[RMDB]
RNA sequence: GGGAACGACUCGAGUAGAGUCGAAAAGAUAUGGACGAUCGAUGAGCGCCACUACAGUCGGAAACGACCGAGGGUGGAACUACGCUUAAGAUCGUCCUAAGUCAAAACUAGAUGUUCGCAUCUAGAACCUAUGCAUACGCUUCGGCGUAUGCAUAGGAAAAGAAACAACAACAACAAC
Reactivity to 2A3 in 0.01 (KOAc 150mM, MgCl2 10mM, bicine 150mM(pH8.5), 24C), signal-to-noise 1, nucleotides 027 to 126: g040a030u030a040u150g000g000a000c030g000a010u000c010g080a050u300g050a110g000c030g040c000c000a000c030u000a000c030a000g000u000c000g030g010a110a090a060c020g020a000c000c020g040a300g000g000g000u060g000g010a020a010c060u130a050c050g030c000u030u020a000a000g000a000u000c000g000u020c000c000u000a000a000g000u000c030a000a010a120a120c000u000a000g000a050u010g080u150u150c300g010c210a000u000c020u020a010g010a030a000
Reactivity to DMS in 0.01 (KOAc 150mM, MgCl2 10mM, bicine 150mM(pH8.5), 24C), signal-to-noise 1, nucleotides 027 to 126: g040a050u030a300u010g000g000a000c000g050a030u000c000g000a270u000g020a000g000c020g010c010c000a020c000u000a000c000a010g000u000c030g040g050a060a070a300c010g000a010c000c010g050a300g020g000g000u000g010g010a060a030c060u000a250c030g010c010u000u000a150a300g000a000u000c000g000u000c000c000u050a000a120g040u000c070a080a140a080a140c000u000a010g000a030u000g030u000u010c210g000c000a010u000c010u000a020g000a090a100
Structure probing data (2A3 and DMS) for a 177-nucleotide construct. Conditions: 150 mM KOAc, 10 mM MgCl2 and 150 mM bicine (pH 8.5), 24 C. Reactivities are given for positions 27 through 126. In probing experiments dimethyl sulfate is read out at A N1 and C N3, which are open when not base-paired.